[RMDB]
RNA sequence: GGGAACGACUCGAGUAGAGUCGAAAAAAAAGAUAUGGAACGAAUGGAGUGUUAGGGAGAAAGUCGCUCGGAAACGAGCGAUAGUUUCGAAGAACUAACACUAUGAAGUUCGUUCCUAAGUCAAAAACCCUUAUUUAUUGUUCGCAAUAAAUAAGGGAAAAGAAACAACAACAACAAC
Reactivity to DMS in 0.01 (KOAc 150mM, MgCl2 10mM, bicine 150mM(pH8.5), 24C), signal-to-noise 3, nucleotides 027 to 126: a040a040a100a100g000a020u000a190u010g000g000a010a000c000g000a020a000u000g000g010a050g020u000g010u000u000a010g000g000g000a050g010a010a010a040g010u000c000g010c000u000c000g000g000a040a020a040c000g010a020g020c000g010a000u000a030g010u000u000u010c000g010a110a120g000a100a160c010u000a000a020c010a010c010u000a110u010g000a070a220g000u000u000c000g010u010u000c000c000u010a000a050g000u000c000a040a080a080a120a100
Reactivity to 2A3 in 0.01 (KOAc 150mM, MgCl2 10mM, bicine 150mM(pH8.5), 24C), signal-to-noise 1, nucleotides 027 to 126: a000a000a000a000g030a030u050a020u070g000g010a000a000c000g010a000a020u070g050g050a080g030u010g020u000u020a000g040g000g000a020g010a000a000a000g020u010c020g010c010u000c010g010g010a040a010a020c010g000a000g000c010g000a010u010a050g020u000u000u000c070g070a210a000g000a010a000c010u000a000a000c000a000c030u020a180u060g030a000a000g000u000u010c010g000u000u030c000c000u000a010a000g000u000c020a050a050a070a210a250